[RMDB]
RNA sequence: GGGAACGACUCGAGUAGAGUCGAAAAUCUGCAAUCUUCGGAUUGCAGAAAAUACGGAUCCAUACGGAUCCAUACGGAUCCAUACGCAUCCAUACGGAUCCAAAACGUACCUCUUCGGAGGUACGAACCAUUGAGUAACCUUCGGGUUACUCAAUGGAAAAGAAACAACAACAACAAC
Reactivity to 2A3 in 0.01 (KOAc 150mM, MgCl2 10mM, bicine 150mM(pH8.5), 24C), signal-to-noise 3, nucleotides 027 to 126: u010c000u000g000c000a020a000u000c000u010u040c110g150g010a000u000u010g000c000a010g000a010a010a010a000u130a020c050g010g000a000u010c020c010a020u070a230c100g000g000a000u000c010c000a010u110a020c060g000g010a000u000c000c010a010u040a120c120g050c070a050u030c060c000a020u060a100c090g010g000a000u000c000c000a010a080a000a000c010g000u000a000c000c000u020c020u020u060c200g080g000a000g000g000u000a000c000g000a000a020
Reactivity to DMS in 0.01 (KOAc 150mM, MgCl2 10mM, bicine 150mM(pH8.5), 24C), signal-to-noise 2, nucleotides 027 to 126: u000c000u000g000c000a000a000u000c000u000u000c200g030g000a050u010u020g010c000a010g020a010a040a050a100u000a060c160g030g000a010u000c050c000a190u000a110c250g010g000a030u000c000c000a010u010a030c170g010g010a010u000c020c010a070u000a070c180g000c170a040u000c040c010a180u000a100c120g000g000a080u010c010c010a090a040a090a100c030g010u000a010c000c000u000c000u000u010c160g000g000a010g010g000u000a000c000g010a040a100
An RNA of 177 nucleotides, treated with 2A3 and DMS and read out base by base.
Source: RMDB library M2PK50, as collected in RNAgym.
The DMS profile rests on 1,475 reads.
Reactivities are given for positions 27 through 126.
The RNA was probed in 150 mM KOAc, 10 mM MgCl2 and 150 mM bicine (pH 8.5) at 24 C.